[RMDB]
RNA sequence: GGGAACGACUCGAGUAGAGUCGAAAAGGUGUUUGGUAUUGGAAGAGCAAAUUUGUGAAUCAUAAAAUGGAAAAGAAAAGAAUGACAACGGUGGUGGCAUUUAAUUUUUUGUGUGUGAUUUUCAACAGACCUAGGAUUUAAGGAAAAUCAUCUGUUACUAUGGUAAUGGAUUCGUCCAUUACCAUAGAAAAGAAACAACAACAACAAC
Reactivity to DMS in 0.01 (KOAc 150mM, MgCl2 10mM, bicine 150mM(pH8.5), 24C), signal-to-noise 2, nucleotides 027 to 156: g000g030u000g000u000u020u010g020g030u000a060u000u010g010g020a040a080g000a140g040c060a050a070a110u000u000u000g010u000g000a100a120u000c020a090u000a010a050a110a090u010g010g000a060a060a040a080g020a070a060a100a230g010a080a070u010g010a090c040a040a050c060g010g030u010g010g030u000g030g020c030a040u000u010u000a070a030u000u010u010u010u010u010g010u000g030u000g030u000g000a080u010u010u000u000c060a060a100c050a070g000a060c070c060u010a130g010g010a080u010u010u000a080a150g010g000a010a010a030a040u010c040a170u000c040u010g010u000u000a150
Reactivity to 2A3 in 0.01 (KOAc 150mM, MgCl2 10mM, bicine 150mM(pH8.5), 24C), signal-to-noise 4, nucleotides 027 to 156: g010g000u040g030u070u060u060g030g000u050a070u080u110g020g030a030a030g010a000g000c020a030a060a060u080u100u050g040u030g040a020a030u060c040a030u150a120a090a110a100u120g040g050a060a060a040a060g090a020a090a010a000g080a040a090u190g010a030c020a070a000c080g030g000u020g000g000u010g000g010c010a000u060u090u130a090a090u060u070u080u030u080u100g070u000g020u000g010u000g020a050u020u030u040u100c030a050a040c000a030g030a030c000c030u080a050g100g000a100u070u070u090a060a090g060g010a010a040a030a020u050c030a020u040c020u010g040u010u000a040